[RMDB]
RNA sequence: GGGAACGACUCGAGUAGAGUCGAAAAAGUCUACUUUUCGAAGUAGACUGUGCUCCCACUUGAACGAGGUCUCACCGUGUCAUUGCCCACGACACUCGGGCGUAAUAGAUUGGUUCGCCAAUCUAAACGCAACUAGGAAAUUCGUUUCCUAGUUGCGAAAAGAAACAACAACAACAAC
Reactivity to DMS in 0.01 (KOAc 150mM, MgCl2 10mM, bicine 150mM(pH8.5), 24C), signal-to-noise 4, nucleotides 027 to 126: a010g000u000c000u000a010c000u000u000u000u020c150g020a020a010g000u000a000g010a010c000u000g010u000g010c170u010c010c000c000a130c150u010u010g010a050a080c070g000a070g010g010u000c020u000c060a120c070c050g000u010g010u000c040a210u010u000g000c060c020c010a130c130g000a060c110a050c040u000c050g010g000g000c030g000u000a070a120u000a010g000a020u000u000g000g010u010u010c240g020c000c000a010a010u000c010u000a010a080a140
Reactivity to 2A3 in 0.01 (KOAc 150mM, MgCl2 10mM, bicine 150mM(pH8.5), 24C), signal-to-noise 3, nucleotides 027 to 126: a010g000u000c010u010a010c000u000u060u030u130c210g090a010a000g010u000a000g010a000c000u010g000u030g020c030u010c010c000c010a040c050u040u150g110a050a030c010g030a020g080g020u020c020u030c050a090c010c040g060u030g040u080c020a100u020u220g040c010c010c000a030c040g040a010c030a020c030u060c040g030g010g000c030g020u060a090a080u020a060g000a000u010u020g000g050u060u040c160g010c060c000a000a000u000c010u010a050a030a000

This 177-nucleotide RNA was probed chemically with DMS and 2A3.
Conditions: 150 mM KOAc, 10 mM MgCl2 and 150 mM bicine (pH 8.5), 24 C.
It was measured as part of the RMDB library M2PK50.
The 2A3 profile rests on 3,996 reads.